[RMDB]
Chemical mapping of a 177-nucleotide RNA with DMS. Reactivities are given for positions 27 through 126. The reactions ran in a buffer of 150 mM KOAc, 10 mM MgCl2 and 150 mM bicine (pH 8.5), at 24 C.

RNA sequence: GGGAACGACUCGAGUAGAGUCGAAAAGAUAUGGACUCCAAUAAGGGAGAGUCAAACAGCGAUGAAAUGGUUCGGAAACGAACCAUGGAGCUGCACUGACUCGAAGAACUUAUUGGAGUCCUAAGUCCUCAAUACCUUCGUUCGCGAAGGUAUUGAGAAAAGAAACAACAACAACAAC
Reactivity to DMS in 0.01 (KOAc 150mM, MgCl2 10mM, bicine 150mM(pH8.5), 24C), signal-to-noise 1, nucleotides 027 to 126: g000a170u010a290u010g010g000a030c000u000c010c010a000a020u010a020a000g010g000g000a140g030a010g010u000c010a010a130a290c000a020g000c020g010a100u030g030a090a120a010u010g010g000u000u000c000g010g000a090a120a290c000g000a020a000c000c000a000u000g020g000a090g000c000u000g020c120a090c300u000g000a010c000u000c000g020a070a110g000a180a160c010u000u000a010u000u000g020g000a000g000u000c000c000u010a000a060g000u010c030